[RMDB]
RNA sequence: GGGAACGACUCGAGUAGAGUCGAAAAUGUUGAAAUAAAUCGCGCAAUAGAUUUAGCAGAUUGCCCUUGGUCUAUUAAAUGCCCCAAACACUCUUGAAUUAAUUGUCGAUCUAUAAAAUCAAUAUGCUCGACAAUGUAUGUUCGCAUACAUUGUCGAAAAAGAAACAACAACAACAAC
Reactivity to DMS in 0.01 (KOAc 150mM, MgCl2 10mM, bicine 150mM(pH8.5), 24C), signal-to-noise 2, nucleotides 027 to 126: u000g000u000u010g010a030a090a050u000a010a030a030u010c020g020c270g020c040a030a040u000a170g010a030u010u000u000a070g030c130a020g000a060u010u000g030c030c040c030u010u020g010g000u020c000u000a100u010u000a040a110a040u010g000c080c050c000c080a050a040a090c090a090c080u000c020u020u000g010a040a020u000u000a120a090u000u000g000u000c020g000a010u000c020u000a090u020a070a050a070a080u000c020a000a040u000a010u000g010c150
Reactivity to 2A3 in 0.01 (KOAc 150mM, MgCl2 10mM, bicine 150mM(pH8.5), 24C), signal-to-noise 1, nucleotides 027 to 126: u030g000u030u070g010a000a000a150u070a020a070a000u040c040g000c010g010c120a020a000u020a150g080a120u050u080u100a040g000c020a010g110a120u080u090g030c010c010c000u000u030g080g030u000c010u020a060u040u090a110a090a050u160g050c000c000c030c030a040a070a030c040a010c050u010c010u040u050g020a020a020u050u070a070a030u100u020g030u020c000g000a060u000c020u100a130u030a140a120a030a030u030c010a020a020u010a000u180g060c040

Background: An RNA of 177 nucleotides, treated with DMS and 2A3 and read out base by base. The 2A3 profile rests on 764 reads. For DMS, 1,279 sequencing reads were counted. Source: RMDB library OK2TST, as collected in RNAgym. As a SHAPE reagent, 2A3 marks flexible, mostly unpaired nucleotides at the ribose 2'-OH. Reactivities are rounded to 0.1 and cut off at 0 and 3. Reactivities are given for positions 27 through 126. The reactions ran in a buffer of 150 mM KOAc, 10 mM MgCl2 and 150 mM bicine (pH 8.5), at 24 C.